[RMDB]
RNA sequence: GGGAACGACUCGAGUAGAGUCGAAAAAGACCACCUCUACGGAGGUGUUCAAGUCACGUAGCUAGUACCAGGUUGCAAUACUAGAGCGUUAGUCCUGGGGCGUACGGUGGCAGUACGCUGCCACCGAUAAAACUUGAAUACUUCGGUAUUCAAGUAACAACGUCUUUAGUUUCGACUAAAGACGUUGAAAAGAAACAACAACAACAAC
Reactivity to DMS in 0.01 (KOAc 150mM, MgCl2 10mM, bicine 150mM(pH8.5), 24C), signal-to-noise 2, nucleotides 027 to 156: a090g010a040c050c010a030c000c000u000c000u000a100c250g070g030a020g010g030u020g030u000u000c020a080a130g000u020c060a160c050g030u010a090g030c000u000a020g000u000a030c050c000a090g010g000u010u000g020c010a130a080u000a020c010u010a020g000a300g000c010g020u000u000a020g000u010c030c000u000g000g000g010g000c100g000u000a050c000g010g020u000g000g060c020a030g040u000a060c210g030c010u010g050c000c000a030c020c000g010a050u000a050a060a080a050c010u000u000g000a030a030u000a010c030u000u010c300g080g050u000a000u020u000c010a010a020g010u000a030a130
Reactivity to 2A3 in 0.01 (KOAc 150mM, MgCl2 10mM, bicine 150mM(pH8.5), 24C), signal-to-noise 2, nucleotides 027 to 156: a020g010a000c020c000a000c000c000u000c010u020a060c270g060g000a000g000g000u000g020u020u040c040a030a010g070u070c060a020c100g020u030a010g080c010u000a000g000u050a160c000c010a000g000g010u000u000g010c010a000a020u000a010c000u000a010g010a010g020c060g090u110u160a010g050u100c000c020u000g000g010g010g050c100g050u170a070c030g020g000u010g010g000c010a000g000u020a030c210g010c070u020g000c000c000a010c000c000g000a000u020a000a060a010a000c000u000u010g000a000a000u000a000c000u010u030c160g090g000u000a000u000u000c000a000a010g000u040a000a020